[RMDB]
RNA sequence: GGGAACGACUCGAGUAGAGUCGAAAAGGGAAGUUUGCUAUCGUAGUCUUUUGGCUACGCUCGAAAGAGGUACAGGAUCUGCUCCAACUGUACCGCGAUAGCACGGAGCAGAAUUUUUAUUCCCGAAGGGAUGCAGCUACUUCGGUAGCUGUGUCCCAAAAGAAACAACAACAACAAC
Reactivity to 2A3 in 0.01 (KOAc 150mM, MgCl2 10mM, bicine 150mM(pH8.5), 24C), signal-to-noise 9, nucleotides 027 to 126: g060g020g030a050a040g050u100u150u110g010c000u010a010u030c000g020u020a020g060u030c030u020u140u100u270g010g000c020u060a060c070g010c020u020c020g070a060a040a020g050a010g000g010u010a010c000a010g010g040a080u030c030u130g020c020u030c020c010a100a060c010u020g000u010a010c000c020g020c020g020a040u040a010g010c030a010c100g000g010a010g000c010a000g030a010a000u010u020u000u020u050a050u040u010c000c000c000g000a060a030
Reactivity to DMS in 0.01 (KOAc 150mM, MgCl2 10mM, bicine 150mM(pH8.5), 24C), signal-to-noise 7, nucleotides 027 to 126: g000g010g010a080a050g010u010u010u020g000c010u000a010u010c000g020u010a040g010u010c010u020u010u010u030g010g000c020u020a040c090g020c090u020c090g000a060a080a070g010a090g000g010u000a010c010a020g000g000a120u010c040u010g000c030u000c020c030a140a150c040u000g000u000a010c010c030g010c070g010a030u010a010g010c020a100c260g020g010a060g000c030a030g010a080a030u020u000u010u010u020a130u030u000c000c000c000g020a130a120

An RNA of 177 nucleotides, treated with 2A3 and DMS and read out base by base. 2A3 adducts were read by reverse transcription with SuperScript II with manganese. Source: RMDB library OK1LIB, as collected in RNAgym.